The record gives the reactivity of an RNA of 177 nucleotides to 2A3. For 2A3, 694 sequencing reads were counted. It was measured as part of the RMDB library RFM100. The RNA was probed in 150 mM KOAc, 10 mM MgCl2 and 150 mM bicine (pH 8.5) at 24 C.
RNA sequence: GGGAACGACUCGAGUAGAGUCGAAAACGUGCAAAUGCUCUGAUUGGGCAGCUUUUAUUGGAUAGUACCAGGCCCUUAGCAGGAUACCCACUUAAUGAGGGUCACCACAAGAGAAUGAUAAAAUAUUGUAGCGUUAUCGAUUCGUCGAUAACGCUACAAAAGAAACAACAACAACAAC
Reactivity to 2A3 in 0.01 (KOAc 150mM, MgCl2 10mM, bicine 150mM(pH8.5), 24C), signal-to-noise 2, nucleotides 027 to 126: c070g060u070g090c070a070a080a130u050g000c000u000c000u120g290a250u120u300g000g000g000c020a020g010c020u170u050u020u090a210u110u090g100g030a070u120a110g040u000a100c020c020a030g080g010c000c000c000u090u000a050g070c110a000g000g000a000u070a100c010c000c010a100c020u070u160a000a130u090g030a060g000g050g000u000c000a000c050c030a050c110a010a000g050a000g090a250a110u130g040a030u130a060a000a060a060u210a020u080u040